An RNA of 207 nucleotides, treated with 2A3 and read out base by base.
It was measured as part of the RMDB library OK3TST.
2A3 adducts were read by reverse transcription with SuperScript II with manganese.

RNA sequence: GGGAACGACUCGAGUAGAGUCGAAAAGCUUUUAGGCGCAGCAUUAGAGAGCAAGCAGCGCGCAGUUUUCAAGCAAGGCAGGCCAAGAGGCGCGCAGCACAUUCAGCCACAGCAGUUCAUUUUGCUUGCUUGCCAUUGCAGUUCAAGAGUUCAGCAGAUUUACGCCAAUCUUCGGAUUGGCGUAAAUAAAAGAAACAACAACAACAAC
Reactivity to 2A3 in 0.01 (KOAc 150mM, MgCl2 10mM, bicine 150mM(pH8.5), 24C), signal-to-noise 1, nucleotides 027 to 156: g020c020u170u010u050u200a020g000g010c020g000c000a040g020c000a040u020u130a100g050a000g000a010g140c020a070a010g000c070a030g000c000g000c040g000c050a010g000u080u070u110u200c080a140a000g030c000a030a050g070g000c040a010g010g000c010c030a140a000g080a060g090g080c030g000c010g000c070a000g040c010a010c010a020u100u180c090a040g000c000c010a040c030a030g130c040a020g030u130u080c020a030u150u080u040u080g020c020u000u040g000c000u000u020g000c000c000a080u020u080g040c020a020g020u050u090c080a150a060g020a020g070u170u160c010a020g020c010a030g060